[RMDB]
RNA sequence: GGGAACGACUCGAGUAGAGUCGAAAAGUGUGGCUGAGUGACCUGAGAUCUGACAGUCCCAUGCUCCUGGGGGCCCAACUCCAUAUCAGAGAAGCUGGAGAACAUAUGUCAAGUCAUAUGCACUGUGGCGACUAACGUAUUUCGAUACGUUAGUCGCAAAAGAAACAACAACAACAAC
Reactivity to 2A3 in 0.01 (KOAc 150mM, MgCl2 10mM, bicine 150mM(pH8.5), 24C), signal-to-noise 1, nucleotides 027 to 126: g040u040g060u030g050g010c030u090g040a040g030u090g010a100c000c030u040g050a050g000a160u000c010u000g040a070c010a040g040u010c020c010c000a020u090g010c010u000c000c000u030g020g000g000g060g030c030c060c010a000a000c000u000c000c010a050u030a070u160c030a010g040a000g020a240a020g080c050u020g030g010a040g040a080a000c000a010u070a020u080g060u070c050a080a000g030u000c010a050u030a000u100g010c030a020c080u060g070u080g180
Reactivity to DMS in 0.01 (KOAc 150mM, MgCl2 10mM, bicine 150mM(pH8.5), 24C), signal-to-noise 2, nucleotides 027 to 126: g020u000g050u000g020g020c040u000g000a080g030u020g010a060c030c070u000g010a070g000a130u000c020u000g020a100c110a120g030u000c060c010c030a110u010g010c010u000c010c000u010g010g000g000g040g000c050c010c060a050a150c090u000c010c030a040u020a090u000c130a170g000a150g010a070a130g020c110u000g000g010a130g000a060a110c010a070u000a030u000g000u010c070a070a160g010u000c010a020u000a050u010g010c140a070c070u000g010u010g030